[RMDB]
RNA sequence: GGGAACGACUCGAGUAGAGUCGAAAAGAUAUGGAAUCGCUGGUGACAUGCUGCAUGAUCGGAAACGAUCAGUGCAGCAACAGCACCACAUGCGAUUCCUAAGUCAAAAUCCACGUUCGCGUGGAAAUCUGAGUAUUGAGUUCGCUCAAUACUCAGAAAAAGAAACAACAACAACAAC
Reactivity to DMS in 0.01 (KOAc 150mM, MgCl2 10mM, bicine 150mM(pH8.5), 24C), signal-to-noise 4, nucleotides 027 to 126: g000a040u000a300u010g000g000a010a000u000c000g040c000u010g010g030u000g010a050c080a280u010g010c000u000g020c000a040u000g000a000u000c000g000g000a110a080a190c000g000a000u000c010a040g040u000g010c000a020g020c000a010a010c190a190g000c000a010c010c000a090c300a090u010g010c000g000a020u000u000c000c000u000a000a090g000u000c030a080a070a170a180u000c000c000a000c000g020u000u000c230g040c030g040u000g000g000a010a040a070
Reactivity to 2A3 in 0.01 (KOAc 150mM, MgCl2 10mM, bicine 150mM(pH8.5), 24C), signal-to-noise 3, nucleotides 027 to 126: g020a000u050a040u140g000g000a010a010u000c000g020c060u070g000g000u030g030a170c110a280u300g010c000u000g030c010a010u020g010a010u010c000g000g000a040a040a030c010g000a000u000c030a050g100u030g010c010a000g030c000a000a000c000a010g020c000a000c020c000a030c030a110u290g000c010g000a000u010u000c000c000u000a060a010g010u000c000a030a040a040a280u060c000c000a000c020g020u080u090c300g000c000g130u010g020g000a060a060a060
Chemical mapping of a 177-nucleotide RNA with DMS and 2A3. It was measured as part of the RMDB library TTRDES. For 2A3 the reverse transcriptase was SuperScript II with manganese. DMS adducts were read by reverse transcription with MarathonRT. The DMS profile rests on 5,023 reads. In probing experiments dimethyl sulfate is read out at A N1 and C N3, which are open when not base-paired.